[RMDB]
RNA sequence: GGGAACGACUCGAGUAGAGUCGAAAACCAUGGCAUGUACAGGGAACAGUGUGCUUGUGAGAGGGACAAUCCAAAGCAGUAGGUUUUUGUUUAUGAUUGGUUUAUAACAGAAUUUUGGGGAAAAAGGACCUUAUCGAAUAUUCGUAUUCGAUAAGGUAAAAGAAACAACAACAACAAC
Reactivity to DMS in 0.01 (KOAc 150mM, MgCl2 10mM, bicine 150mM(pH8.5), 24C), signal-to-noise 9, nucleotides 027 to 126: c020c010a100u020g000g010c060a040u010g010u010a060c100a070g010g000g000a050a060c080a050g010u010g020u010g000c020u010u010g020u010g010a100g000a090g010g010g010a070c090a070a080u010c040c060a060a060a080g010c040a040g000u010a100g010g010u000u010u000u010u000g010u000u010u010a050u020g000a090u000u010g010g010u010u000u010a050u020a070a070c070a070g000a060a060u000u000u010u010g010g000g000g000a040a040a060a090a080g010g000
Reactivity to 2A3 in 0.01 (KOAc 150mM, MgCl2 10mM, bicine 150mM(pH8.5), 24C), signal-to-noise 9, nucleotides 027 to 126: c000c000a060u060g060g000c040a030u050g020u120a050c030a030g030g000g050a090a020c020a090g060u040g010u020g080c010u070u040g040u040g070a120g020a030g030g030g020a030c040a010a040u010c010c020a040a020a020g000c020a020g030u110a080g010g090u020u030u010u080u050g040u010u070u030a080u050g070a070u040u060g030g050u050u040u060a130u050a100a030c030a020g070a070a050u050u070u090u160g020g000g010g020a000a040a010a040a050g090g020
Source: RMDB libraries RFM100 and RFMREP, as collected in RNAgym.
Structure probing data (DMS and 2A3) for a 177-nucleotide construct.
As a SHAPE reagent, 2A3 marks flexible, mostly unpaired nucleotides at the ribose 2'-OH.
The reactions ran in a buffer of 150 mM KOAc, 10 mM MgCl2 and 150 mM bicine (pH 8.5), at 24 C.